[RMDB]
RNA sequence: GGGAACGACUCGAGUAGAGUCGAAAACUUCUUAAUAACUGUAUUAUCUUAUCAAGCGCUGAUGGUUCUGCAAGAGAUGCUAAUUGUUUUGAUAAUGAGGUUACUUGUAGAGAGGACUGACCAAUUACUGACCGUAUAGUUUCGACUAUACGGUCAGAAAAGAAACAACAACAACAAC
Reactivity to DMS in 0.01 (KOAc 150mM, MgCl2 10mM, bicine 150mM(pH8.5), 24C), signal-to-noise 2, nucleotides 027 to 126: c060u010u010c020u000u010a070a110u000a060a060c050u010g010u000a080u000u000a060u000c010u020u000a070u000c020a070a070g000c090g030c080u020g030a180u010g030g000u000u000c080u000g010c100a090a080g010a090g000a050u010g020c050u000a080a130u000u010g020u000u000u000u000g010a040u000a030a050u000g010a110g000g010u000u000a010c100u000u010g000u000a070g010a060g010a050g010g010a050c090u000g040a160c050c010a080a100u010u000a120
Reactivity to 2A3 in 0.01 (KOAc 150mM, MgCl2 10mM, bicine 150mM(pH8.5), 24C), signal-to-noise 2, nucleotides 027 to 126: c000u060u030c010u060u130a190a100u080a140a060c010u040g060u030a100u110u020a030u050c010u070u040a080u130c010a080a030g060c000g000c100u040g030a090u120g090g100u100u000c010u040g060c040a050a040g040a020g030a150u020g070c000u020a080a090u110u010g090u110u130u080u080g030a030u030a120a020u090g020a010g090g000u020u000a030c030u100u080g060u140a060g050a000g000a010g030g020a040c050u060g010a030c010c020a030a040u090u090a120
An RNA of 177 nucleotides, treated with DMS and 2A3 and read out base by base. For DMS, 1,323 sequencing reads were counted. The RNA was probed in 150 mM KOAc, 10 mM MgCl2 and 150 mM bicine (pH 8.5) at 24 C. For 2A3, 1,053 sequencing reads were counted. 2A3 adducts were read by reverse transcription with SuperScript II with manganese.